[RMDB]
RNA sequence: GGGAACGACUCGAGUAGAGUCGAAAAUACUUCUGGAUGGGAAAGCAUGCCCAUCCGAAACGUACGUGCGCCCAUCCGAAACGUACGAAUAUGUUACACGGUUCAGGAAGGAACGCCCAUCCGAAACGUACGGGCUCGUCCAUUCGGAUAAGGAUGGGUCUACCCACUUGUUCGCAAGUGGGUAGACAAAAGAAACAACAACAACAAC
Reactivity to 2A3 in 0.01 (KOAc 150mM, MgCl2 10mM, bicine 150mM(pH8.5), 24C), signal-to-noise 1, nucleotides 027 to 156: u050a010c010u020u020c000u190g020g000a000u000g030g080g000a160a270a130g160c040a050u150g030c000c000c010a000u000c000c000g000a000a010a000c030g040u010a000c000g000u020g070c090g030c030c000c000a000u000c000c000g090a060a000a000c000g000u030a000c000g020a020a060u260a040u120g180u240u090a120c170a050c250g250g080u120u070c050a020g020g020a010a000g000g020a090a000c060g080c030c000c000a000u020c000c000g010a040a070a120c000g140u130a090c070g020g220g090c180u220c060g000u050c050c000a000u000u000c000g000g000a010u000a140a170g010g000a000u000g020g000